The data come from the RNA Mapping Database (RMDB), library OK1LIB.
Structure probing data (DMS and 2A3) for a 177-nucleotide construct.
For 2A3 the reverse transcriptase was SuperScript II with manganese.
Reactivities are given for positions 27 through 126.
For 2A3, 33,447 sequencing reads were counted.
The reactions ran in a buffer of 150 mM KOAc, 10 mM MgCl2 and 150 mM bicine (pH 8.5), at 24 C.
[RMDB]
RNA sequence: GGGAACGACUCGAGUAGAGUCGAAAAGCAAGACUUUCCUUUGCAAGGAUGUGCGCGGCAGUCACCCCGCUGCACCUUUCGCUGGCAUCCGGCGCGGUUCGAUGGAAAGUCCCCAGCGCCUAACAGAGAUAUUAAUCAGGUUCGCCUGAUUAAUAUCAAAAGAAACAACAACAACAAC
Reactivity to DMS in 0.01 (KOAc 150mM, MgCl2 10mM, bicine 150mM(pH8.5), 24C), signal-to-noise 9, nucleotides 027 to 126: g010c110a200a080g000a030c010u000u000u000c000c000u000u020u020g020c030a120a080g000g010a020u000g020u000g010c110g010c100g010g000c010a030g000u010c120a300c040c010c000c030g000c010u000g000c010a110c160c140u010u030u060c030g010c010u020g020g010c010a010u000c000c000g010g010c140g010c040g010g010u020u030c110g010a060u010g000g000a010a010a010g010u000c000c020c020c070a110g000c050g010c030c020u010a090a100c170a100g000a260
Reactivity to 2A3 in 0.01 (KOAc 150mM, MgCl2 10mM, bicine 150mM(pH8.5), 24C), signal-to-noise 9, nucleotides 027 to 126: g050c040a070a040g010a040c010u010u010u030c010c000u060u100u180g050c060a120a090g030g010a040u030g040u130g110c030g000c020g060g010c010a010g030u090c060a230c020c000c000c000g010c010u040g000c010a110c020c040u090u250u130c040g010c040u090g080g000c010a010u010c000c010g020g020c060g000c030g090g090u180u220c090g060a060u070g020g010a020a000a010g010u020c010c000c000c000a050g010c030g030c010c010u070a120a060c050a040g130a010